This 177-nucleotide RNA was probed chemically with DMS and 2A3.
RNA sequence: GGGAACGACUCGAGUAGAGUCGAAAAAGUAUAUAAGCUGGUUUUCUGUGUAACGGCACCUUGUUUAGUGUGGAUUGCUGAUUCAGGAACAGUCAACAUGCACUCACUCGUGCCUGAAUGCAGCUUCCUAUCCCUAAAGGUUCGCCUUUAGGGAUAGAAAAGAAACAACAACAACAAC
Reactivity to DMS in 0.01 (KOAc 150mM, MgCl2 10mM, bicine 150mM(pH8.5), 24C), signal-to-noise 9, nucleotides 027 to 126: a090g010u010a080u020a120u020a070a100g000c040u000g010g010u000u000u000u000c030u010g010u000g010u010a050a150c220g000g010c070a030c040c070u000u000g000u000u000u000a060g030u000g010u000g010g010a160u010u000g010c010u000g000a100u000u010c090a070g000g010a060a060c050a030g000u010c080a050a070c130a080u010g000c090a040c060u010c300a040c040u000c150g010u000g000c010c000u000g010a160a020u000g010c010a010g000c140u000u000c060
Reactivity to 2A3 in 0.01 (KOAc 150mM, MgCl2 10mM, bicine 150mM(pH8.5), 24C), signal-to-noise 6, nucleotides 027 to 126: a000g060u060a080u030a040u040a230a060g020c030u070g090g010u060u050u070u060c040u030g060u010g040u080a070a020c010g020g010c010a010c010c040u080u060g040u090u160u080a070g000u040g020u030g070g100a200u050u070g000c010u000g020a080u060u070c070a070g080g080a070a060c010a010g040u050c010a030a030c020a080u240g030c030a020c030u030c010a010c010u030c050g000u020g000c000c000u000g000a000a000u080g050c000a000g010c010u030u000c000
For 2A3 the reverse transcriptase was SuperScript II with manganese. The data come from the RNA Mapping Database (RMDB), library OK2TRN. The RNA was probed in 150 mM KOAc, 10 mM MgCl2 and 150 mM bicine (pH 8.5) at 24 C. In probing experiments dimethyl sulfate is read out at A N1 and C N3, which are open when not base-paired.